[RMDB]
The data come from the RNA Mapping Database (RMDB), library OK3TST.
Chemical mapping of a 207-nucleotide RNA with 2A3 and DMS.
The RNA was probed in 150 mM KOAc, 10 mM MgCl2 and 150 mM bicine (pH 8.5) at 24 C.
For 2A3 the reverse transcriptase was SuperScript II with manganese.
RNA sequence: GGGAACGACUCGAGUAGAGUCGAAAAUACUGUGUUAGUACUAAAGAUGACAGAAAAAAGUACAACCCUAGAUCCUUGGCCAGAGAUGCUUACUUGUCUUACACUUCUUACAGUCCCCUCUUUACUACACGACAGGUUAACUUAAUCAGGACAGACAUACCCAUCAUUUAUUCGUAAAUGAUGGGUAAAAAGAAACAACAACAACAAC
Reactivity to 2A3 in 0.01 (KOAc 150mM, MgCl2 10mM, bicine 150mM(pH8.5), 24C), signal-to-noise 3, nucleotides 027 to 156: u150a000c050u030g020u000g040u140u060a070g030u030a060c040u080a000a080a070g110a050u190g010a030c070a080g190a070a130a020a020a020a000g040u060a100c060a060a100c020c000c010u060a080g020a130u040c050c010u030u020g030g010c040c010a020g000a010g000a140u070g010c020u030u010a090c010u030u070g060u030c020u010u070a030c010a030c010u080u070c030u120u140a100c040a100g140u140c020c000c010c000u080c050u060u090u030a050c030u010a020c030a010c070g110a010c000a030g040g020u040u030a060a020c020u030u050a020a030u100c030a010g030g000a010c010a000g120a090c070a000
Reactivity to DMS in 0.01 (KOAc 150mM, MgCl2 10mM, bicine 150mM(pH8.5), 24C), signal-to-noise 3, nucleotides 027 to 156: u010a080c060u000g040u030g030u000u000a090g010u010a110c050u000a060a110a150g000a120u010g020a210c060a130g020a000a050a050a120a060a090g010u000a060c040a060a120c040c020c030u000a090g010a090u000c020c030u000u000g010g010c000c080a180g010a130g020a120u010g010c040u000u010a030c040u000u000g010u010c020u000u000a070c070a070c050u000u010c020u000u000a090c030a140g010u000c010c000c010c000u000c040u000u000u000a050c050u010a070c070a090c040g030a080c060a060g000g000u010u000a060a040c070u000u000a060a070u010c060a080g020g010a090c060a130g000a040c050a240